[RMDB]
RNA sequence: GGGAACGACUCGAGUAGAGUCGAAAACUAUCUUCGCGGCAUUAGCUACAAGGUUACUGUGGGUACCCUUGUGGCUAAUGAAGGCUGGAACGCCUCUGAGGACGCCCUCACAGCUGUCAUCACCGCCCAACUGAAUGGGUUUCGACCCAUUCAGUUGAAAAGAAACAACAACAACAAC
Reactivity to 2A3 in 0.01 (KOAc 150mM, MgCl2 10mM, bicine 150mM(pH8.5), 24C), signal-to-noise 4, nucleotides 027 to 126: c030u040a110u230c080u200u170c130g010c000g020g000c020a000u000u000a000g000c000u000a000c000a000a000g020g000u030u010a010c020u110g140u300g300g170g000u050a010c000c010c000u000u000g000u000g000g010c000u000a000a000u000g000a000a000g000g000c010u030g090g080a060a020c080g000c020c000u010c050u040g010a020g000g020a050c030g020c030c010c000u140c020a070c020a030g020c020u140g040u050c010a030u010c010a020c010c010g020c030c000
Reactivity to DMS in 0.01 (KOAc 150mM, MgCl2 10mM, bicine 150mM(pH8.5), 24C), signal-to-noise 3, nucleotides 027 to 126: c040u010a060u010c100u000u020c160g020c020g000g010c010a020u000u000a000g010c010u000a000c000a000a010g000g010u000u000a020c010u010g020u010g000g030g020u000a020c070c000c000u000u000g000u000g000g000c000u000a000a000u000g000a070a040g000g020c010u000g010g010a130a110c100g020c000c010u000c080u000g010a070g000g010a020c030g000c020c050c060u020c280a120c220a120g010c030u010g010u000c020a050u000c010a040c000c010g010c010c300